[RMDB]
RNA sequence: GGGAACGACUCGAGUAGAGUCGAAAAUGAAGCAAAUCCAUGAUUGCCAAUGAUGAGCAAUUCGCUAUUGCCGCCUAAAAACGGUUAGCCGGGGCUGCUAGAGCCUUGUUACCAAAGAUAGCCGGCGUUACGGCAUGAUGGUUCGCCAUCAUGCCAAGUUAUAGUACCGGUUCGCCGGUACUAUAACAAAAGAAACAACAACAACAAC
Reactivity to 2A3 in 0.01 (KOAc 150mM, MgCl2 10mM, bicine 150mM(pH8.5), 24C), signal-to-noise 5, nucleotides 027 to 156: u150g020a030a010g050c070a110a040a020u070c050c020a070u150g000a020u010u020g020c020c020a150a130u240g100a150u090g020a120g010c010a010a040u100u090c050g010c070u060a060u110u210g020c000c020g010c020c010u080a050a040a020a010a010c030g000g010u060u050a010g010c040c020g030g000g010g010c010u040g030c060u120a050g030a000g230c000c000u010u010g050u050u070a040c000c020a040a050a030g060a050u030a010g030c020c010g000g020c020g080u120u130a050c070g000g000c000a000u000g000a000u000g000g050u030u060c190g010c060c000a010u000c000a010u000g020c000c000a000a000
Reactivity to DMS in 0.01 (KOAc 150mM, MgCl2 10mM, bicine 150mM(pH8.5), 24C), signal-to-noise 2, nucleotides 027 to 156: u000g000a130a100g020c050a090a100a130u000c050c030a120u000g000a050u000u010g020c000c030a140a170u010g030a250u000g010a130g030c010a050a030u010u000c070g020c040u010a070u000u010g030c000c030g000c020c060u000a070a080a110a120a130c040g000g010u010u000a040g020c050c030g010g020g010g040c030u000g030c060u010a100g020a080g000c010c010u000u010g000u000u000a060c090c060a100a080a130g030a150u010a030g000c030c110g000g000c030g050u000u010a060c110g020g020c000a010u000g000a040u010g040g000u000u020c300g020c040c000a020u000c000a010u010g000c000c000a010a010